An RNA of 177 nucleotides, treated with 2A3 and DMS and read out base by base.

RNA sequence: GGGAACGACUCGAGUAGAGUCGAAAAUACUGUCUUCGGUUUCUGAUAAUGUCUUUGUCGGCACCGUUUACAUUAAUGAGGCGCGGAAAGCAUUUGAAUUGGGCGUUAUCUCUCUGCAACAGUUCGAGCAUCUCCUUUUAUUCGUAAAAGGAGAUGCAAAAGAAACAACAACAACAAC
Reactivity to 2A3 in 0.01 (KOAc 150mM, MgCl2 10mM, bicine 150mM(pH8.5), 24C), signal-to-noise 2, nucleotides 027 to 126: u080a010c050u040g050u070c050u030u040c000g070g020u010u130u020c030u070g010a030u030a080a050u100g110u060c050u000u150u030g100u140c020g060g000c020a030c010c010g000u020u020u050a060c030a040u100u170a100a100u190g070a030g060g040c050g000c030g050g040a050a040a030g020c020a070u110u070u160g080a080a040u040u040g020g000g010c010g000u020u020a100u000c030u000c010u010c010u000g000c020a060a020c010a070g020u090u090c040g000a000
Reactivity to DMS in 0.01 (KOAc 150mM, MgCl2 10mM, bicine 150mM(pH8.5), 24C), signal-to-noise 3, nucleotides 027 to 126: u010a080c090u010g010u000c040u010u010c050g010g010u000u010u000c050u000g010a070u000a040a050u010g020u010c070u000u000u010g030u010c020g040g030c280a060c040c000g000u010u000u010a100c090a100u010u000a050a080u000g000a150g010g020c100g020c040g020g010a050a040a070g020c040a050u000u020u020g010a070a110u000u000g010g000g020c020g030u000u000a040u010c030u000c030u000c010u010g010c150a100a080c160a050g010u000u000c090g020a260
Background:
Values cover nucleotides 27 to 126. The RNA was probed in 150 mM KOAc, 10 mM MgCl2 and 150 mM bicine (pH 8.5) at 24 C. The 2A3 profile rests on 1,843 reads. It was measured as part of the RMDB library OK2TST.